An RNA of 177 nucleotides, treated with 2A3 and DMS and read out base by base. For DMS the reverse transcriptase was MarathonRT. 2A3 adducts were read by reverse transcription with SuperScript II with manganese. The RNA was probed in 150 mM KOAc, 10 mM MgCl2 and 150 mM bicine (pH 8.5) at 24 C.
[RMDB]
RNA sequence: GGGAACGACUCGAGUAGAGUCGAAAACUCAGUCAAAUAUUGGUUUUGGCUGGCGUCAUUUUUCAGGAAAUGACUGGAUGGCGGGGGUGAAUACUUUUAUCGAUCAUGAUUUAUCCCGUAGUCAUACCUCCUUCAUUAACUUCGGUUAAUGAAGGAGAAAAGAAACAACAACAACAAC
Reactivity to 2A3 in 0.01 (KOAc 150mM, MgCl2 10mM, bicine 150mM(pH8.5), 24C), signal-to-noise 2, nucleotides 027 to 126: c030u020c000a000g030u010c000a000a030a000u150a130u280u300g130g060u030u000u020u010g000g020c000u000g080g060c070g000u000c000a010u030u010u030u090u090c080a040g140g030a000a030a000u000g000a010c060u090g230g000a020u020g000g020c040g010g010g010g000g000u060g040a020a020u220a300c040u050u120u190u150a220u210c050g070a050u090c050a080u250g070a010u010u010u010a040u000c000c020c010g000u050a030g010u000c000a010u040a130c010
Reactivity to DMS in 0.01 (KOAc 150mM, MgCl2 10mM, bicine 150mM(pH8.5), 24C), signal-to-noise 3, nucleotides 027 to 126: c050u010c000a000g010u000c000a010a010a020u000a130u000u010g020g020u010u000u000u010g000g030c000u000g000g000c190g000u000c010a000u000u010u000u010u030c260a120g010g000a030a040a010u010g000a020c010u010g030g010a050u000g020g000c030g010g010g010g020g010u010g010a020a040u010a060c090u000u010u010u020a250u030c200g010a090u000c130a050u020g000a040u010u000u000a060u000c000c000c010g030u010a080g020u000c010a040u000a110c180